An RNA of 207 nucleotides, treated with 2A3 and read out base by base.
RNA sequence: GGGAACGACUCGAGUAGAGUCGAAAAACGGUUAAACUCGGAGAAAAAUGCGUCACUGAGCGGAUUGUUCCACUGACGUGUAGCCAUGUUGUAAUAACUGGAUAAAAAAAACAAGGCUCUACUUCACAAUGAAGGUCGUCAAGCGGAAUGGUGAGCCACCAACCUUCCGAUUCGUCGGAAGGUUGGUAAAAGAAACAACAACAACAAC
Reactivity to 2A3 in 0.01 (KOAc 150mM, MgCl2 10mM, bicine 150mM(pH8.5), 24C), signal-to-noise 1, nucleotides 027 to 156: a000c080g000g040u040u030a100a120a000c000u000c090g160g000a080g110a010a080a000a050a000u100g030c050g010u010c010a040c110u080g000a020g040c070g000g190a300u200u300g020u120u000c030c000a080c020u000g010a060c000g020u020g000u040a030g000c010c000a040u130g000u040u040g030u030a120a100u070a050a090c010u020g000g120a040u250a000a110a040a000a000a000a000a000c100a090a050g040g000c000u060c000u000a020c020u050u090c070a060c080a160a200u270g010a180a040g000g080u030c010g020u030c020a010a010g020c000g010g040a090a030u040g130g000u090g040a040g060c060c000